Structure probing data (2A3 and DMS) for a 177-nucleotide construct. The RNA was probed in 150 mM KOAc, 10 mM MgCl2 and 150 mM bicine (pH 8.5) at 24 C. DMS adducts were read by reverse transcription with MarathonRT. For 2A3, 1,939 sequencing reads were counted. 2A3 adducts were read by reverse transcription with SuperScript II with manganese.
[RMDB]
RNA sequence: GGGAACGACUCGAGUAGAGUCGAAAAAUGCGAGGUGACUGUGACUAUGAGGCAGUAGUCAGCAUCAACUACAACAGCGCUCAAUACAAGACAGUGAACAACACAUGGAAAUCAUGGAAACGGGUAGACAGGUAGGCAUAUUCGUAUGCCUACCUGUAAAAGAAACAACAACAACAAC
Reactivity to 2A3 in 0.01 (KOAc 150mM, MgCl2 10mM, bicine 150mM(pH8.5), 24C), signal-to-noise 2, nucleotides 027 to 126: a000u080g020c040g020a010g140g010u030g020a080c030u040g040u020g120a000c040u040a050u150g080a020g060g000c000a020g010u040a000g030u010c060a000g000c010a060u050c010a010a050c030u090a020c010a120a000c000a020g050c080g050c040u030c040a050a040u130a090c010a070a070g030a010c000a020g020u000g080a060a000c020a030a000c040a030c000a040u040g000g050a130a070a020u160c040a030u050g040g000a040a090a010c050g020g010g000u010a030g040
Reactivity to DMS in 0.01 (KOAc 150mM, MgCl2 10mM, bicine 150mM(pH8.5), 24C), signal-to-noise 3, nucleotides 027 to 126: a060u010g010c030g000a080g020g010u000g030a070c080u000g010u000g010a070c070u000a060u010g040a100g010g020c050a140g010u000a020g000u000c030a070g020c070a040u000c050a080a050c060u000a030c100a050a130c170a090g020c060g000c020u000c060a070a030u000a070c100a110a070g010a050c070a030g000u000g000a090a050c070a010a070c160a080c050a020u000g000g000a060a040a090u010c010a050u010g010g020a050a060a060c050g030g020g000u000a120g000